Source information: Chemical mapping of a 177-nucleotide RNA with 2A3 and DMS. Conditions: 150 mM KOAc, 10 mM MgCl2 and 150 mM bicine (pH 8.5), 24 C. The data come from the RNA Mapping Database (RMDB), library OK2TST. DMS (dimethyl sulfate) methylates the pairing face of unpaired adenines and cytosines.
RNA sequence: GGGAACGACUCGAGUAGAGUCGAAAAUGUAACGGAAGACUCAUCAUCAACUUUAGUUGUGGCUUUAGGCGGGAUUUCGUAAACAUUGAGCCAAAAUGCAGAUUCUCUAUCCAGCGGCAAUUUACUGCUAAAUGCUUUCGUUCGCGAAAGCAUUUAGAAAAGAAACAACAACAACAAC
Reactivity to 2A3 in 0.01 (KOAc 150mM, MgCl2 10mM, bicine 150mM(pH8.5), 24C), signal-to-noise 1, nucleotides 027 to 126: u040g020u020a060a050c030g000g000a060a030g050a060c010u030c050a080u010c010a030u000c010a070a010c070u250u240u140a060g020u050u040g030u030g030g030c040u060u060u160a100g110g020c000g020g000g070a050u010u010u040c050g010u030a070a030a030c020a000u030u100g040a020g050c000c000a060a100a050a020u130g000c040a020g050a230u050u000c030u050c020u070a080u020c020c030a020g020c010g040g000c010a020a030u220u190u100a010c040u110g010
Reactivity to DMS in 0.01 (KOAc 150mM, MgCl2 10mM, bicine 150mM(pH8.5), 24C), signal-to-noise 3, nucleotides 027 to 126: u000g000u000a150a050c030g020g020a060a060g010a130c020u000c060a080u000c210a060u020c030a060a050c040u010u000u000a130g020u000u000g020u010g020g020c110u000u000u010a070g030g030c060g000g000g000a260u000u000u010c040g010u010a080a080a080c040a030u010u000g000a120g030c040c080a040a060a050a070u000g000c060a070g000a120u000u000c040u010c040u000a070u010c060c060a060g020c040g000g000c080a040a040u010u010u000a070c090u000g000